[RMDB]
RNA sequence: GGGAACGACUCGAGUAGAGUCGAAAAGAUAUGGACCUAACAGGACAUGCAGCUCGGAAACGAGGCUGCAACAGCCUGGGAGGUCCUAAGUCAAAGUAGGACUUUCCCUUCGGGGAAAGUCCUACAAGAAUAGGACAUACUUCGGUAUGUCCUAUUCAAAAGAAACAACAACAACAAC
Reactivity to 2A3 in 0.01 (KOAc 150mM, MgCl2 10mM, bicine 150mM(pH8.5), 24C), signal-to-noise 1, nucleotides 027 to 126: g020a000u020a040u090g000g000a000c000c000u000a020a020c010a010g000g050a080c020a100u060g000c000a000g010c000u010c000g000g030a030a020a040c010g010a010g180g090c000u000g000c000a000a010c010a000g060c000c000u010g000g000g000a010g000g010u010c000c010u010a030a020g000u010c020a090a040a080g000u000a010g000g000a000c000u020u010u030c000c000c000u010u040c300g020g010g000g000a000a000a000g000u010c000c000u000a000c000a000a000
Reactivity to DMS in 0.01 (KOAc 150mM, MgCl2 10mM, bicine 150mM(pH8.5), 24C), signal-to-noise 4, nucleotides 027 to 126: g000a040u000a290u010g000g000a010c000c000u000a060a050c010a010g010g000a120c080a190u000g010c000a000g010c000u000c000g000g000a070a080a110c010g010a020g030g020c010u010g020c010a000a040c250a120g000c010c000u000g000g000g010a010g010g010u000c000c000u000a000a060g000u000c040a090a120a170g010u000a000g000g000a020c000u000u000u000c000c000c000u000u000c220g010g000g010g000a010a000a000g000u000c000c000u000a000c000a040a050